Chemical mapping of a 170-nucleotide RNA with DMS.
For DMS, 1,505 sequencing reads were counted.
Conditions: 150 mM KOAc, 10 mM MgCl2 and 150 mM bicine (pH 8.5), 24 C.
[RMDB]
RNA sequence: GGGAACGACUCGAGUAGAGUCGAAAAGUUUUACUGUUUUUGUGUGCACAGACAACUCUGCUAACACUAAAGUUCUUAGGAACAAGGGUGUUGAUUAUACUAAGAAGUUUCUUACAGUUGACGGUGUGAACUCGGCGCUUCGGCGCCGAGAAAAGAAACAACAACAACAAC
Reactivity to DMS in 0.01 (KOAc 150mM, MgCl2 10mM, bicine 150mM(pH8.5), 24C), signal-to-noise 2, nucleotides 027 to 129: g000u000u010u000u000a000c010u050g000u000u000u120u000u000g020u240g070u000g150c090a160c150a050g000a060c240a150a030c070u090c120u000g000c080u000a050a080c300a000c120u000a000a000a170g050u000u000c000u010u010a070g090g000a030a030c000a000a150g000g080g000u000g120u030u030g000a140u220u060a000u000a160c300u040a200a030g000a000a300g020u000u020u000c000u000u000a000c060a030g000u060u010g000a120c070g010g050u030g000u000g000a090a260